[RMDB]
RNA sequence: GGGAACGACUCGAGUAGAGUCGAAAAGAGUUCCUCCGCUUUCUUUCUUCCACUCACCCACUUCUCGAGAAUAUCUUCUCUUCCAUCGCGCUUCUUCUUCGAUUCGGAUCGGCUCAUCUCGACAAGACACGAUAGCUGUUCGCAGCUAUCAAAAGAAACAACAACAACAAC
Reactivity to 2A3 in 0.01 (KOAc 150mM, MgCl2 10mM, bicine 150mM(pH8.5), 24C), signal-to-noise 9, nucleotides 027 to 129: g070a000g020u010u020c000c000u020c000c010g010c010u080u160u030c000u030u060u020c000u060u020c020c010a040c030u040c020a060c010c010c000a040c020u080u030c020u020c030g060a050g050a090a070u110a080u140c060u070u000c010u010c000u060u020c020c010a070u040c020g010c010g000c050u040u010c000u030u000c000u030u030c050g110a130u050u040c020g030g050a030u000c000g000g000c000u000c000a030u000c000u000c010g040a040c030a070a030g080a040c040a010c180
Reactivity to DMS in 0.01 (KOAc 150mM, MgCl2 10mM, bicine 150mM(pH8.5), 24C), signal-to-noise 9, nucleotides 027 to 129: g040a110g030u020u010c000c020u020c070c060g020c060u020u020u020c030u010u020u010c070u000u020c010c030a060c040u040c070a140c050c020c030a030c010u050u000c000u010c010g000a090g000a120a100u060a070u040c060u000u020c010u030c010u010u020c030c010a080u020c080g030c030g010c080u000u000c020u000u000c040u030u010c050g040a150u030u030c030g000g000a100u010c000g010g010c000u000c000a030u000c000u000c010g010a090c070a080a080g010a080c180a100c180